[RMDB]
RNA sequence: GGGAACGACUCGAGUAGAGUCGAAAAUUCUUGGCCUUCCGGAGCUCCCUCUCGAGUUCCUCCGCCCUUUUUCUUCCAGACACCCACUGCUCGAGGACGUCCUCCCUUCCCCCUCGAGCCUUCUUCGCAAACAGCUAGUUCGCUAGCUGUAAAAGAAACAACAACAACAAC
Reactivity to DMS in 0.01 (KOAc 150mM, MgCl2 10mM, bicine 150mM(pH8.5), 24C), signal-to-noise 9, nucleotides 027 to 129: u020u000c030u010u020g000g000c050c070u030u030c070c050g000g000a070g030c100u000c050c000c050u030c000u000c080g000a120g040u000u030c050c020u000c040c050g000c030c020c030u030u020u000u020u010c060u050u010c020c050a130g030a150c100a140c050c030c060a200c060u000g010c010u000c000g010a040g010g020a100c120g000u050c050c050u000c030c000c010u000u000c000c010c010c010c010u000c040g020a020g000c050c050u000u000c000u010u020c080g020c200a100a090
Reactivity to 2A3 in 0.01 (KOAc 150mM, MgCl2 10mM, bicine 150mM(pH8.5), 24C), signal-to-noise 9, nucleotides 027 to 129: u050u020c010u030u050g030g020c010c010u070u040c060c020g010g000a030g010c020u030c020c010c010u030c020u030c050g040a020g010u020u030c010c000u020c020c020g020c010c000c000u030u040u020u030u010c030u060u020c020c020a020g020a050c010a060c020c020c010a040c030u030g010c010u010c010g010a030g040g060a160c020g030u040c010c010u030c010c000c000u020u050c000c000c000c010c010u020c010g020a020g000c010c000u040u030c010u040u040c040g040c060a120a120